[RMDB]
RNA sequence: GGGAACGACUCGAGUAGAGUCGAAAAGAUAUGGACUGUUCCCAGCGUCGAUGAAAUCGGAAACGAUGGAGACGGCUGGGAGACAGUCCUAAGUCAAAACCGUUAUAGUGUUCGCACUAUAACGGAAUCAUAAUAGUGUCUUCGGACACUAUUAUGAAAAAGAAACAACAACAACAAC
Reactivity to DMS in 0.01 (KOAc 150mM, MgCl2 10mM, bicine 150mM(pH8.5), 24C), signal-to-noise 8, nucleotides 027 to 126: g000a050u000a300u010g000g010a010c000u000g010u000u000c000c000c000a010g020c000g010u000c000g000a110u020g000a090a130a010u000c000g000g000a160a120a220c010g010a010u000g000g000a100g010a010c000g030g020c010u000g000g010g000a020g010a010c010a000g010u000c000c000u000a010a070g000u000c030a100a090a110a170c010c000g000u000u000a000u000a010g010u000g010u000u020c240g020c000a010c000u000a000u000a010a010c000g000g000a010a020
Reactivity to 2A3 in 0.01 (KOAc 150mM, MgCl2 10mM, bicine 150mM(pH8.5), 24C), signal-to-noise 7, nucleotides 027 to 126: g020a020u060a050u150g000g000a000c010u000g000u010u020c000c000c000a010g010c000g020u020c000g120a300u070g010a040a030a000u020c010g010g050a070a060a050c030g000a010u020g010g010a030g000a010c140g200g260c000u010g010g010g010a050g050a000c000a000g000u000c000c000u000a010a000g020u010c020a000a020a130a200c000c000g000u000u000a000u000a010g010u010g050u090u080c300g050c100a000c010u000a000u000a000a000c000g000g000a000a040